[RMDB]
RNA sequence: GGGAACGACUCGAGUAGAGUCGAAAAUCACAAAGCGGAUUUAGCUCGGUUGGGAGAGGUCCAGACCGAAGAUCUGGUUGUCCUGUGUGCGAUACACAGAAUUCGCACCAUAAACAACGGGAGAUUCAGCCCAUAAUCAGUUCGCUGAUUAUGGGCUAAAAGAAACAACAACAACAAC
Reactivity to DMS in 0.01 (KOAc 150mM, MgCl2 10mM, bicine 150mM(pH8.5), 24C), signal-to-noise 2, nucleotides 027 to 126: u060c110a060c070a130a080a140g030c070g030g010a060u000u060u040a110g000c050u000c020g000g000u000u020g020g000g000a100g000a190g000g120u000c000c010a120g000a070c030c040g050a000a070g010a070u000c000u000g000g020u010u000g000u000c030c160u010g020u080g040u010g010c000g020a030u000a090c130a050c300a250g000a070a100u020u000c000g000c000a000c000c060a000u020a160a110a030c060a070a030c000g030g020g000a070g000a070u040u000c070
Reactivity to 2A3 in 0.01 (KOAc 150mM, MgCl2 10mM, bicine 150mM(pH8.5), 24C), signal-to-noise 3, nucleotides 027 to 126: u140c020a030c050a070a150a060g030c060g020g010a030u050u110u110a030g010c000u010c030g000g060u040u070g030g040g000a190g020a030g090g070u050c000c010a060g050a060c040c020g000a030a000g010a020u010c010u030g090g000u000u010g030u000c020c050u160g070u060g000u000g070c010g000a000u080a070c130a020c030a140g180a050a050u040u000c010g000c000a010c000c000a000u140a030a130a010c020a030a000c010g020g050g000a040g010a010u080u070c050